[RMDB]
RNA sequence: GGGAACGACUCGAGUAGAGUCGAAAAUAGAGAUGGCAAUUUGGGAAAAAUUGGGGCUGGACGAUAUUUUGGCUUGGAUGUGGUCUAUGGGUCAUAAGAGAACUAUACUGCAAGAUUUCCAAGCCGGGUUCGGGGAGGAGUUCGCUCCUCCCCGAACAAAAGAAACAACAACAACAAC
Reactivity to 2A3 in 0.01 (KOAc 150mM, MgCl2 10mM, bicine 150mM(pH8.5), 24C), signal-to-noise 1, nucleotides 027 to 126: u230a000g060a000g000a030u070g010g060c040a010a200u020u020u020g000g000g000a000a300a000a080a000u030u060g010g030g080g020c090u030g140g000a110c070g020a020u050a110u230u060u090u120g000g000c000u000u000g000g030a030u000g060u020g000g000u000c060u150a120u090g010g000g000u000c000a070u030a210a050g030a000g000a070a030c000u020a020u130a130c080u000g020c030a070a070g000a300u020u250u000c000c000a000a000g060c000c000g000g010